[RMDB]
RNA sequence: GGGAACGACUCGAGUAGAGUCGAAAAUUACUAGUCUGUGAUGAAUUGCUUUGACUUCUGACACCUCGUAUGAUAACUGCACGUGCAGUCUGAUUAUUUAGCAAGACUGAGGCUUAAAAUAAAUCAACAUCUUUAGUAUGUUCGCAUACUAAAGAUGAAAAGAAACAACAACAACAAC
Reactivity to 2A3 in 0.01 (KOAc 150mM, MgCl2 10mM, bicine 150mM(pH8.5), 24C), signal-to-noise 7, nucleotides 027 to 126: u080u040a040c030u010a010g050u000c030u040g140u040g090a060u030g030a020a140u060u040g020c020u090u050u090g050a090c000u040u010c020u050g050a030c010a050c050c020u030c040g040u070a050u140g070a050u070a150a070c030u040g000c050a020c120g090u120g010c010a000g010u000c010u000g020a040u020u090a070u090u130u060a030g020c020a040a010g010a030c030u030g030a020g070g000c010u060u060a030a070a030a050u150a030a110a050u070c010a000a060
Reactivity to DMS in 0.01 (KOAc 150mM, MgCl2 10mM, bicine 150mM(pH8.5), 24C), signal-to-noise 9, nucleotides 027 to 126: u010u010a090c060u000a060g010u010c040u000g010u010g020a080u010g010a080a120u000u000g010c050u000u000u010g010a080c080u000u000c040u000g010a110c080a080c070c030u000c080g010u000a050u000g010a110u000a060a060c070u010g010c030a100c240g020u000g020c030a030g000u000c040u000g010a080u000u000a070u000u000u010a050g010c060a060a050g020a080c060u000g010a080g010g000c050u000u000a030a050a060a070u000a040a050a080u010c080a070a200
Annotation
This 177-nucleotide RNA was probed chemically with 2A3 and DMS. The RNA was probed in 150 mM KOAc, 10 mM MgCl2 and 150 mM bicine (pH 8.5) at 24 C. Reactivities are given for positions 27 through 126.